[RMDB]
RNA sequence: GGGAACGACUCGAGUAGAGUCGAAAAGUUAUGGAAAACGUCUUAGCUACCACUACAACAACAAUGCUGGACGGUGAUGGUUCGACUUACUCGAAACCAUCACCUAGUGGUAGUCGUUCCCAUUCAAUAUUAAAUGAAUGUUCGCAUUCAUUUAAUAAAAAGAAACAACAACAACAAC
Reactivity to DMS in 0.01 (KOAc 150mM, MgCl2 10mM, bicine 150mM(pH8.5), 24C), signal-to-noise 9, nucleotides 027 to 126: g010u000u000a110u010g020g000a090a070a070a070c080g010u010c060u000u000a110g020c010u000a020c010c010a010c020u000a110c070a040a030c060a060a110c240a090a090u000g020c040u000g010g010a110c160g000g010u000g000a010u000g000g000u000u000c000g000a030c230u010u010a080c230u000c000g000a030a040a050c010c000a000u000c010a010c010c020u000a000g010u000g010g010u000a030g010u000c020g000u000u000c000c000c000a120u010u000c070a060a150
Reactivity to 2A3 in 0.01 (KOAc 150mM, MgCl2 10mM, bicine 150mM(pH8.5), 24C), signal-to-noise 9, nucleotides 027 to 126: g020u050u060a070u250g120g050a120a130a010a050c030g060u030c060u090u110a030g000c010u010a010c000c010a020c020u090a030c020a130a000c000a050a020c030a130a250u210g070c050u070g070g080a070c060g000g010u000g000a000u010g010g010u010u000c010g000a040c060u130u190a080c040u080c020g020a080a030a030c000c000a000u010c000a010c000c000u010a000g000u000g000g000u000a000g000u000c000g000u000u000c000c000c000a000u060u040c010a010a050
The data come from the RNA Mapping Database (RMDB), library M2PK90. The record gives the reactivity of an RNA of 177 nucleotides to DMS and 2A3. The RNA was probed in 150 mM KOAc, 10 mM MgCl2 and 150 mM bicine (pH 8.5) at 24 C.